[RMDB]
RNA sequence: GGGAACGACUCGAGUAGAGUCGAAAAUUCAACCCCAAAAAUCUAGUGCAAAUAUUGUCUUAAUUACUAAGGCUAAAAGAAAUAAGUAUUAAAGCGGGACAAGGCAUCGACAUUUGAUACAAAUAUUUUUAGCAUAUUAGAUUCGUCUAAUAUGCAACUCCUAGUACAUCUUCGGAUGUACUAGGAGAAAAGAAACAACAACAACAAC
Reactivity to 2A3 in 0.01 (KOAc 150mM, MgCl2 10mM, bicine 150mM(pH8.5), 24C), signal-to-noise 1, nucleotides 027 to 156: u090u100c080a000a180c020c040c000c010a000a150a090a000a000u040c010u030a060g030u000g050c000a000a000a300u090a110u130u080g000u000c000u000u050a110a150u100u000a190c060u100a020a040g000g000c000u100a120a090a020a000g100a030a150a030u100a170a000g000u050a030u110u010a190a010a000g100c000g000g000g060a020c070a030a070g050g000c000a010u080c000g050a090c020a090u020u060u150g030a000u040a080c020a020a270a040u120a170u140u260u060u300u300a070g000c000a000u010a000u000u000a000g020a030u030u030c010g000u000c020u000a000a000u000a000u030g000c000a000a000